The record gives the reactivity of an RNA of 177 nucleotides to 2A3 and DMS.
Source: RMDB library 15KREP, as collected in RNAgym.
Conditions: 150 mM KOAc, 10 mM MgCl2 and 150 mM bicine (pH 8.5), 24 C.

RNA sequence: GGGAACGACUCGAGUAGAGUCGAAAAAAGGACGGAUUUGUCAGUGUAGAGCUACAACCUCCUUGCAAAUUCUUGAUUGCGGGACCAAAAGGACCUGAAAUCCGAUAUCUCUAUUUUGUUAAAAAUCACCCAUAAUCAAGUUCGCUUGAUUAUGGGUAAAAGAAACAACAACAACAAC
Reactivity to 2A3 in 0.01 (KOAc 150mM, MgCl2 10mM, bicine 150mM(pH8.5), 24C), signal-to-noise 1, nucleotides 027 to 126: a000a000g100g030a070c170g000g030a020u120u070u050g030u060c060a030g010u010g030u130a110g010a050g060c010u010a010c010a020a000c000c000u000c000c000u010u000g020c010a020a020a150u120u100c050u060u240g060a090u000u100g000c030g010g000g040a060c030c000a050a210a120a250g030g020a020c010c000u070g020a020a030a000u020c000c000g030a050u040a090u060c020u020c020u050a110u150u100u120u190g090u020u060a200a060a020a000a090u150c060
Reactivity to DMS in 0.01 (KOAc 150mM, MgCl2 10mM, bicine 150mM(pH8.5), 24C), signal-to-noise 3, nucleotides 027 to 126: a010a030g000g000a020c140g010g010a090u010u000u010g010u010c120a020g020u010g020u020a100g010a170g010c020u000a040c030a010a040c070c010u010c010c000u010u000g020c120a060a070a180u010u000c040u000u000g010a060u010u000g020c040g020g030g000a120c010c020a070a070a070a130g020g010a080c000c010u000g010a020a030a040u000c020c290g010a100u000a050u000c020u010c010u000a140u000u000u000u010g010u000u020a030a080a060a060a080u010c130